Structure probing data (DMS and 2A3) for a 177-nucleotide construct. It was measured as part of the RMDB libraries RFM100 and RFMREP. For 2A3 the reverse transcriptase was SuperScript II with manganese.
RNA sequence: GGGAACGACUCGAGUAGAGUCGAAAAGAGCUCCUCUCUGUCAAUCCAGUGGCAGUGUAUGGAUUCGCACGAGAAGUAGAGUGAUUCACAGUUUAACAGGUGUUUCCACUGCAUUGGGACAUGCCCAGCUUUAUAUUUCGUUCGCGAAAUAUAAAGCAAAAGAAACAACAACAACAAC
Reactivity to DMS in 0.01 (KOAc 150mM, MgCl2 10mM, bicine 150mM(pH8.5), 24C), signal-to-noise 8, nucleotides 027 to 126: g000a170g000c060u010c010c040u000c020u000c000u000g010u000c240a030a030u010c020c030a040g020u010g010g010c040a030g010u000g010u020a100u010g000g000a030u000u000c300g020c040a030c140g010a040g000a050a080g020u030a080g010a050g010u010g000a140u000u000c020a050c040a110g010u010u010u020a080a110c210a080g010g030u000g010u000u000u010c030c020a100c050u000g010c060a080u020u020g000g000g010a130c150a060u020g010c000c010c020a130
Reactivity to 2A3 in 0.01 (KOAc 150mM, MgCl2 10mM, bicine 150mM(pH8.5), 24C), signal-to-noise 9, nucleotides 027 to 126: g050a010g020c010u000c000c000u000c010u000c000u010g030u030c010a010a030u010c010c010a010g030u080g090g030c050a040g020u030g020u130a080u030g000g010a010u000u030c050g010c020a040c130g010a010g010a130a020g030u180a060g030a020g030u060g040a080u070u060c050a040c050a160g070u060u110u110a180a070c070a060g000g110u040g020u040u040u010c050c010a030c030u040g010c030a070u040u110g030g010g020a050c040a080u150g050c000c000c000a010